[RMDB]
RNA sequence: GGGAACGACUCGAGUAGAGUCGAAAAGGUUCGGGAUCCUCUUUAAUAUCCCCGAAAUAUCAAUAAAUGCCGAUUACGGCUACAUGGCAGCUGCUUAAUUAGCUCUGCCCGCUCUGGAUUAAGUUUGUCUGUGGUUUAAUCUAAGAGCGUCAUAAACCGCUGAAAGAAGGUUCGCCUUCUUUCAGCGAAAAGAAACAACAACAACAAC
Reactivity to 2A3 in 0.01 (KOAc 150mM, MgCl2 10mM, bicine 150mM(pH8.5), 24C), signal-to-noise 1, nucleotides 027 to 156: g080g090u050u020c050g000g020g020a000u000c000c040u040c070u160u130u090a160a170u130a060u120c000c010c000c000g070a000a000a000u120a060u090c090a100a070u140a180a190a020u140g000c000c000g150a130u180u280a140c120g050g030c030u030a080c040a080u050g000g090c000a000g030c090u040g000c010u180u080a180a120u130u140a140g000c000u000c000u000g000c000c000c000g010c040u000c000u000g000g000a040u000u000a000a000g000u080u040u020g100u030c150u030g010u010g000g030u000u000u000a000a000u000c000u050a210a000g000a010g000c000g000u000c010a000u060a040a120a030c000